An RNA of 177 nucleotides, treated with 2A3 and DMS and read out base by base. Source: RMDB libraries RFM100 and RFMREP, as collected in RNAgym. The reactions ran in a buffer of 150 mM KOAc, 10 mM MgCl2 and 150 mM bicine (pH 8.5), at 24 C. For DMS the reverse transcriptase was MarathonRT. Values cover nucleotides 27 to 126.
RNA sequence: GGGAACGACUCGAGUAGAGUCGAAAACGGACACUGGGUAGAGAGUACCUGGGGUGUAACCCCCCACACCUGAUCUAAACCACCUGGGGUUAUACACCUUGGACCAAGCUAAGAUGCAUUGCGGAGCAAAACCCUUGUGUUUCGACACAAGGGUUUUAAAAGAAACAACAACAACAAC
Reactivity to 2A3 in 0.01 (KOAc 150mM, MgCl2 10mM, bicine 150mM(pH8.5), 24C), signal-to-noise 4, nucleotides 027 to 126: c020g040g020a010c020a020c070u070g010g030g000u080a060g040a010g000a010g130u030a130c010c000u030g000g000g010g000u020g000u010a010a020c000c000c000c000c000c000a020c010a020c040c020u060g050a080u080c050u200a080a080a060c020c050a030c030c030u030g000g010g010g000u010u010a010u000a030c140a130c010c000u010u020g020g000a010c020c000a000a010g000c010u040a060a000g010a080u080g030c000a040u040u170g020c030g030g010a010g040c040
Reactivity to DMS in 0.01 (KOAc 150mM, MgCl2 10mM, bicine 150mM(pH8.5), 24C), signal-to-noise 5, nucleotides 027 to 126: c080g010g000a060c070a070c040u000g010g000g000u000a040g010a110g010a130g010u000a090c010c040u000g000g020g010g000u000g000u010a020a070c030c040c000c010c110c050a060c110a070c040c030u010g000a100u010c100u010a060a090a130c060c050a040c100c040u020g020g000g000g020u020u000a070u010a030c020a050c020c010u000u000g000g010a090c050c040a080a100g000c040u000a060a080g010a070u010g000c060a050u000u000g010c050g010g000a080g000c090